RNA sequence: GGGAACGACUCGAGUAGAGUCGAAAAGAUAUGGAUCUGUUCGAGGCAACAGCAUCCGUGUCGGAAACGACACGAUGACAUGCCUCAACAGAUCCUAAGUCAAAAGAUCACACUUCGGUGUGAUCAAGUUUCGCUUUGUGUUCGCACAAAGCGAAACAAAAGAAACAACAACAACAAC
Reactivity to 2A3 in 0.01 (KOAc 150mM, MgCl2 10mM, bicine 150mM(pH8.5), 24C), signal-to-noise 1, nucleotides 027 to 126: g010a020u060a040u080g000g000a010u000c000u000g000u080u200c280g010a020g020g000c040a300a050c100a300g060c010a000u020c120c090g000u000g010u000c000g000g000a010a010a030c020g000a000c000a000c010g010a000u020g020a000c130a210u300g000c000c000u010c010a000a010c000a000g010a000u000c000c020u000a000a000g010u010c000a000a000a020a220g000a000u020c000a000c000a000c010u070u230c300g160g000u010g000u000g000a000u000c000a000a000
Reactivity to DMS in 0.01 (KOAc 150mM, MgCl2 10mM, bicine 150mM(pH8.5), 24C), signal-to-noise 1, nucleotides 027 to 126: g000a020u000a300u000g000g000a000u000c020u000g010u000u000c210g000a020g010g040c000a020a020c290a240g040c020a000u020c110c110g010u000g000u000c000g050g000a080a070a160c000g010a020c000a020c020g010a000u000g020a000c110a270u000g030c000c000u000c000a040a000c010a060g000a000u000c020c060u000a000a020g000u020c000a110a140a050a070g010a010u000c000a060c000a020c000u020u030c110g030g010u000g070u000g020a050u000c010a030a060
Structure probing data (2A3 and DMS) for a 177-nucleotide construct. The RNA was probed in 150 mM KOAc, 10 mM MgCl2 and 150 mM bicine (pH 8.5) at 24 C. For 2A3, 2,119 sequencing reads were counted. For DMS, 804 sequencing reads were counted. Source: RMDB library TTRDES, as collected in RNAgym. 2A3 adducts were read by reverse transcription with SuperScript II with manganese.